[RMDB]
RNA sequence: GGGAACGACUCGAGUAGAGUCGAAAAUAUUUACCGCGAUAAACAUAAAAUACGGGGAUAUUCCUCGAUGAGCAUAGAGUGCGGGAAUAUUCCGCGAUGAGUAUAGAAUGCGGAGAUAUUCCGCGAACCAUAAUAUGCGAUUCGUCGCAUAUUAUGGAAAAGAAACAACAACAACAAC
Reactivity to DMS in 0.01 (KOAc 150mM, MgCl2 10mM, bicine 150mM(pH8.5), 24C), signal-to-noise 6, nucleotides 027 to 126: u000a010u010u000u000a120c010c000g020c040g020a130u010a080a150a130c090a120u010a060a070a110a100u010a100c040g020g010g000g000a050u000a030u000u000c040c020u000c080g010a060u000g010a230g010c050a070u000a110g010a150g010u010g010c030g000g010g000a010a010u000a020u000u000c010c000g020c030g020a050u010g020a130g000u000a100u010a100g010a130a090u010g000c000g000g010a040g000a030u000a040u010u000c010c010g020c070g010a070a120
Reactivity to 2A3 in 0.01 (KOAc 150mM, MgCl2 10mM, bicine 150mM(pH8.5), 24C), signal-to-noise 8, nucleotides 027 to 126: u040a020u020u070u070a300c000c000g000c020g030a040u110a130a180a020c040a040u150a080a140a080a030u190a110c020g000g030g000g000a010u020a060u130u050c010c010u030c020g080a110u150g070a020g040c070a060u080a160g160a030g130u140g020c040g000g030g020a010a010u020a010u040u000c010c000g060c010g050a070u120g030a020g070u130a060u030a230g160a130a070u150g000c000g040g020a010g010a010u080a030u080u030c010c010g050c020g030a010a000